[RMDB]
Annotation: Chemical mapping of a 177-nucleotide RNA with 2A3. The RNA was probed in 150 mM KOAc, 10 mM MgCl2 and 150 mM bicine (pH 8.5) at 24 C. For 2A3 the reverse transcriptase was SuperScript II with manganese.
RNA sequence: GGGAACGACUCGAGUAGAGUCGAAAAAGUGGCUAAACACUUUAUGGUUUCUGUUAAAUAUAUAUGCGUGAGAAAAAUUAGCAUUCAAAUCUAUAAAAGUUAGAUGACAUUGUAGAACCGGUUACCUACUCACAGAACUGUUCGCAGUUCUGUGAGUAAAAGAAACAACAACAACAAC
Reactivity to 2A3 in 0.01 (KOAc 150mM, MgCl2 10mM, bicine 150mM(pH8.5), 24C), signal-to-noise 3, nucleotides 027 to 126: a000g020u000g020g020c150u180a060a180a040c000a000c000u000u010u010a110u070g000g000u010u060u040c020u000g060u080u090a100a160a060u130a010u010a010u010a000u050g010c060g060u150g120a120g200a040a040a050a090a090u210u140a080g000c000a010u060u050c030a050a050a080u030c030u020a080u060a190a090a020a110g120u060u010a030g010a000u010g020a040c030a050u070u230g060u090a030g000a000a000c000c000g000g020u020u100a010c000c000u090
The 2A3 profile rests on 1,025 reads. Reactivities are given for positions 27 through 126.